[RMDB]
RNA sequence: GGGAACGACUCGAGUAGAGUCGAAAAUGACGGUACACUCAUGGUAGAGCGGUUUGUGUCUUUGGCUAUAGAUGCUUACCCUCUCACAAAGCAUGAAGAUAUAGAAUACCAGAAUGUAUUCUGGGUCGGGGGCACCUGUUCGCAGGUGCCAAAAGAAACAACAACAACAAC
Reactivity to DMS in 0.01 (KOAc 150mM, MgCl2 10mM, bicine 150mM(pH8.5), 24C), signal-to-noise 4, nucleotides 027 to 129: u070g010a110c120g000g000u000a040c160a190c090u010c030a000u000g000g040u010a000g010a020g030c300g000g010u020u000u050g040u010g050u010c010u010u040u010g070g010c160u030a090u040a040g010a040u010g030c020u000u060a030c020c010c000u040c000u030c070a040c210a060a100a180g000c030a010u030g010a050a060g020a210u000a040u050a070g020a050a010u040a090c010c130a000g000a130a070u050g000u050a000u000u010c020u010g030g000g050u050c000g040g040g030
Reactivity to 2A3 in 0.01 (KOAc 150mM, MgCl2 10mM, bicine 150mM(pH8.5), 24C), signal-to-noise 4, nucleotides 027 to 129: u100g000a030c010g030g030u090a030c060a000c040u060c020a040u050g120g000u110a020g020a010g010c140g010g010u000u000u010g020u020g000u000c000u030u120u080g090g010c000u000a020u050a190g010a000u010g000c000u000u000a010c000c010c000u000c000u020c010a030c000a070a130a020g060c000a000u030g030a120a030g020a000u070a020u010a090g050a090a030u050a150c000c000a000g120a080a060u230g050u080a120u000u000c020u000g010g010g010u000c030g040g030g000